[RMDB]
RNA sequence: GGGAACGACUCGAGUAGAGUCGAAAAUAAGAUCUCAUGAGAAUUCACUCGCUGUCAUGAGAACAGCAUGGGAAACCACCCUCGUGAUCCAGUUAUCUCCACCUGGUCCCGGUUUUGAUACGUGGGGACCAGGAUGGGCCUUCGGGCCCAUCCUGGUAAAAGAAACAACAACAACAAC
Reactivity to 2A3 in 0.01 (KOAc 150mM, MgCl2 10mM, bicine 150mM(pH8.5), 24C), signal-to-noise 2, nucleotides 027 to 126: u190a010a000g120a060u040c000u000c040a000u090g020a010g010a060a100u160u030c040a060c030u070c060g020c010u000g000u030c060a170u160g100a060g040a170a000c020a000g020c000a050u060g030g010g000a020a150a160c050c020a010c030c010c000u000c030g030u010g000a000u050c000c000a000g030u050u030a080u030c000u000c000c000a010c000c050u000g000g000u000c000c000c000g080g040u010u080u100u300g140a060u130a030c050g000u020g050g000g010g000
Reactivity to DMS in 0.01 (KOAc 150mM, MgCl2 10mM, bicine 150mM(pH8.5), 24C), signal-to-noise 1, nucleotides 027 to 126: u000a120a130g000a090u000c060u000c000a000u040g000a070g000a090a130u040u020c000a040c020u000c120g030c010u000g070u010c000a180u030g000a210g070a080a050c050a050g000c040a070u000g040g000g020a050a030a090c050c060a070c150c020c030u000c020g040u020g000a030u030c020c010a010g000u000u000a060u030c000u000c020c000a000c030c000u000g000g000u000c000c000c010g000g000u020u000u000u000g010a210u000a000c020g010u050g030g010g000g000